[RMDB]
RNA sequence: GGGAACGACUCGAGUAGAGUCGAAAAGUCGAGGAGGACCCUACACACGGUGAGUGGGAGAAAGCACCUGGGAGAGCAUCCCGCAGCCCAGGAGGGUGGUCAGGUUAAGUCACAGCAGGGAUGGGGCUCAUUUAUUGCACUUCGGUGCAAUAAAUGAAAAAGAAACAACAACAACAAC
Reactivity to DMS in 0.01 (KOAc 150mM, MgCl2 10mM, bicine 150mM(pH8.5), 24C), signal-to-noise 4, nucleotides 027 to 126: g040u010c040g010a070g010g010a170g020g000a230c050c010c020u010a090c070a130c120a090c100g020g010u000g000a120g020u020g010g010g020a110g000a060a080a090g030c070a100c030c010u000g010g000g010a130g020a100g020c060a110u000c020c020c020g020c090a170g020c010c010c030a040g010g000a110g000g010g000u000g000g000u010c080a040g000g020u000u000a070a100g020u020c080a070c070a070g010c060a090g010g000g010a090u000g010g000g000g010c140